[RMDB]
RNA sequence: GGGAACGACUCGAGUAGAGUCGAAAAAGUGGCCGCGAAUGGGACCGGGGUGCCCAGCGGCUGUGGGGACUCUGUCCUGCGGAAACCGCGGUGACGAGCACAAGCUCGGUCAACUGGAUGGGAAUCGCCGUGGUAAUACAUUCGUGUAUUACCACGGAAAAGAAACAACAACAACAAC
Reactivity to DMS in 0.01 (KOAc 150mM, MgCl2 10mM, bicine 150mM(pH8.5), 24C), signal-to-noise 3, nucleotides 027 to 126: a110g020u000g030g020c020c010g020c000g010a120a130u020g010g000g000a040c060c090g000g010g010g000u000g000c000c000c000a040g000c110g010g020c110u010g030u010g020g010g020g000a070c030u000c020u000g000u000c000c000u000g010c060g000g010a050a100a090c070c010g000c000g000g020u000g010a040c000g010a030g010c020a180c300a140a110g010c000u000c000g000g010u010c030a090a100c070u000g000g010a060u010g000g000g000a090a090u000c100g010
Reactivity to 2A3 in 0.01 (KOAc 150mM, MgCl2 10mM, bicine 150mM(pH8.5), 24C), signal-to-noise 2, nucleotides 027 to 126: a020g090u040g050g030c010c000g020c020g080a150a180u160g000g010g000a010c030c160g060g000g000g100u180g040c000c030c030a040g140c090g060g010c010u040g030u030g000g000g000g000a020c010u010c030u170g030u000c020c010u030g010c000g040g000a090a110a030c020c020g030c040g070g030u040g010a020c010g010a010g030c000a090c020a220a070g010c010u010c020g100g130u070c020a070a120c060u070g000g040a100u060g090g040g000a030a080u060c090g010